[RMDB]
RNA sequence: GGGAACGACUCGAGUAGAGUCGAAAACGAAGGACUUUCGAGUCCUUCGACUUACCGAGAAAGAUCCUCGGUAUAAAUCUGGAACCCUUGGAAACAAGCGAAUGAACGGAAUCUUCGGAUUCCGUAAUACAUGGGGAUCAUUCGUGAUCCCCAUGUAAAAAGAAACAACAACAACAAC
Reactivity to 2A3 in 0.01 (KOAc 150mM, MgCl2 10mM, bicine 150mM(pH8.5), 24C), signal-to-noise 1, nucleotides 027 to 126: c000g000a010a000g000g010a000c000u030u010u200c210g080a000g010u000c010c010u020u000c000g000a000c000u010u010a000c000c000g000a010g010a060a210a000g130a020u040c030c000u010c020g000g010u030a050u100a000a010a000u030c040u100g160g050a030a050c000c010c040u030u010g050g030a030a070a030c050a050a020g080c000g150a070a130u160g070a120a030c020g000g030a000a000u000c000u050u100c190g060g000a000u000u000c000c000g000u000a000a010
Reactivity to DMS in 0.01 (KOAc 150mM, MgCl2 10mM, bicine 150mM(pH8.5), 24C), signal-to-noise 2, nucleotides 027 to 126: c030g000a000a000g000g000a000c000u000u000u020c210g010a000g010u000c010c010u000u000c000g010a080c160u000u000a010c000c000g020a030g000a110a150a100g000a140u000c060c020u000c020g000g010u000a010u000a050a050a100u000c070u000g030g000a110a040c070c090c010u010u000g000g000a200a100a160c020a000a030g030c160g030a140a070u000g000a130a010c000g000g020a020a020u000c000u000u030c210g010g000a020u000u000c000c010g000u010a020a090